[RMDB]
RNA sequence: GGGAACGACUCGAGUAGAGUCGAAAACUUAUGGUUCGCCAUAAGAAACGGGAUGAUGAACCUCCAUCCCAACUGAAUAAAUGAUGAAUGCACAUCAGGCUGACAAAAACACACUCUUCGGAGUGUGGAAAUUGGAAAUGUUCGCAUUUCCAAUUUCAAAAGAAACAACAACAACAAC
Reactivity to 2A3 in 0.01 (KOAc 150mM, MgCl2 10mM, bicine 150mM(pH8.5), 24C), signal-to-noise 6, nucleotides 027 to 126: c000u000u000a000u020g010g050u040u060c260g020c050c000a000u010a000a010g000a060a030a020c100g000g010g010a010u030g010a010u080g060a070a090c010c010u020c020c010a010u020c000c010c000a000a050c060u060g070a090a100u090a200a110a080u090g040a020u040g040a170a100u180g040c090a040c010a160u030c020a010g110g000c040u090g040a050c040a050a140a010a070a000c000a000c000a000c000u000c010u030u080c210g130g010a000g000u000g000u010g000
Reactivity to DMS in 0.01 (KOAc 150mM, MgCl2 10mM, bicine 150mM(pH8.5), 24C), signal-to-noise 4, nucleotides 027 to 126: c010u000u000a000u000g010g020u000u000c240g080c000c010a000u000a000a010g000a060a090a130c280g000g010g010a040u000g010a130u000g010a090a190c050c030u000c140c010a020u000c000c010c000a100a150c210u010g000a090a060u000a060a100a070u010g000a050u000g000a130a120u010g010c100a140c040a050u000c030a040g000g010c080u010g020a110c130a040a070a050a070a300c010a000c000a000c000u000c000u000u020c190g010g000a000g000u000g030u000g000
An RNA of 177 nucleotides, treated with 2A3 and DMS and read out base by base. It was measured as part of the RMDB library RFMREP. 2A3 adducts were read by reverse transcription with SuperScript II with manganese. The 2A3 profile rests on 7,653 reads. The reactions ran in a buffer of 150 mM KOAc, 10 mM MgCl2 and 150 mM bicine (pH 8.5), at 24 C.